Structure probing data (DMS and 2A3) for a 177-nucleotide construct.
For DMS the reverse transcriptase was MarathonRT.
2A3 is a SHAPE reagent: it acylates the 2'-hydroxyl of flexible nucleotides of all four kinds.
It was measured as part of the RMDB library OK2TRN.
The RNA was probed in 150 mM KOAc, 10 mM MgCl2 and 150 mM bicine (pH 8.5) at 24 C.
For 2A3, 2,573 sequencing reads were counted.
2A3 adducts were read by reverse transcription with SuperScript II with manganese.
Reactivities are given for positions 27 through 126.
The DMS profile rests on 4,422 reads.
RNA sequence: GGGAACGACUCGAGUAGAGUCGAAAAGGCCAAGGUGCGUGCCUUGCCAUUCUGCACUGCUCCUCGCUCAAGCUGCCAGGCAUUUCUGGAUGGUCAUCUGGGUUAUGAUUAAAGCCACCAGAUCCACACAAAACCUUUGAUUCGUCAAAGGUUUUGUAAAAGAAACAACAACAACAAC
Reactivity to DMS in 0.01 (KOAc 150mM, MgCl2 10mM, bicine 150mM(pH8.5), 24C), signal-to-noise 4, nucleotides 027 to 126: g010g010c090c070a070a070g010g040u000g020c190g010u000g000c010c020u000u000g000c020c020a100u000u000c060u000g010c040a090c050u000g000c030u000c020c020u000c090g020c040u010c040a080a110g030c050u000g010c020c040a070g000g010c140a090u000u000u000c020u000g000g010a170u000g000g000u000c080a040u010c010u010g010g010g010u000u010a090u010g010a090u000u000a060a070a140g010c060c030a080c020c000a020g000a040u010c030c040a110c220
Reactivity to 2A3 in 0.01 (KOAc 150mM, MgCl2 10mM, bicine 150mM(pH8.5), 24C), signal-to-noise 2, nucleotides 027 to 126: g040g000c070c040a020a040g050g000u160g100c140g140u280g040c010c000u000u010g000c030c000a050u090u070c030u100g040c030a030c050u040g000c010u000c010c020u010c010g010c020u030c040a070a040g070c020u010g010c000c000a020g050g000c060a080u050u050u100c000u020g100g000a150u020g030g000u050c020a030u000c080u050g040g060g100u130u130a100u160g090a040u070u200a170a060a010g040c010c010a040c020c000a020g000a030u000c010c000a030c000